[RMDB]
RNA sequence: GGGAACGACUCGAGUAGAGUCGAAAAGACUACGGGUUCGCCCGUAGUCACUUACCGAGAAUGCGACUCGGUAUAUAACGCAAACCCUUGGAAACAAGCGAAUCACCAGUUCCUUCGGGAACUGGAACAUCAGACAAUUGUUCGCAAUUGUCUGAUGAAAAGAAACAACAACAACAAC
Reactivity to DMS in 0.01 (KOAc 150mM, MgCl2 10mM, bicine 150mM(pH8.5), 24C), signal-to-noise 4, nucleotides 027 to 126: g000a010c000u000a000c000g010g020g010u000u010c200g010c000c000c000g030u000a000g010u000c010a010c120u010u000a120c000c000g000a010g010a130a090u000g010c100g000a120c010u000c010g000g000u000a010u010a050u010a070a080c140g020c090a030a110a180c070c070c000u000u000g010g000a130a110a150c060a050a060g010c100g000a110a090u010c170a160c020c000a000g000u000u000c000c000u000u010c160g030g000g010a010a010c000u000g010g000a040a100
Reactivity to 2A3 in 0.01 (KOAc 150mM, MgCl2 10mM, bicine 150mM(pH8.5), 24C), signal-to-noise 3, nucleotides 027 to 126: g010a000c000u000a000c000g000g000g040u030u080c210g090c030c000c000g000u000a000g000u010c000a000c000u010u040a020c000c010g000a000g020a080a120u180g070c050g110a070c040u000c000g000g000u000a000u010a000u000a020a000c020g000c030a030a090a220c000c020c000u020u050g090g050a080a070a020c030a070a020g010c020g120a040a060u110c050a060c110c000a000g000u000u000c010c000u020u080c160g070g000g000a000a000c000u000g000g000a000a010
The record gives the reactivity of an RNA of 177 nucleotides to DMS and 2A3. The RNA was probed in 150 mM KOAc, 10 mM MgCl2 and 150 mM bicine (pH 8.5) at 24 C. Values cover nucleotides 27 to 126. For 2A3 the reverse transcriptase was SuperScript II with manganese.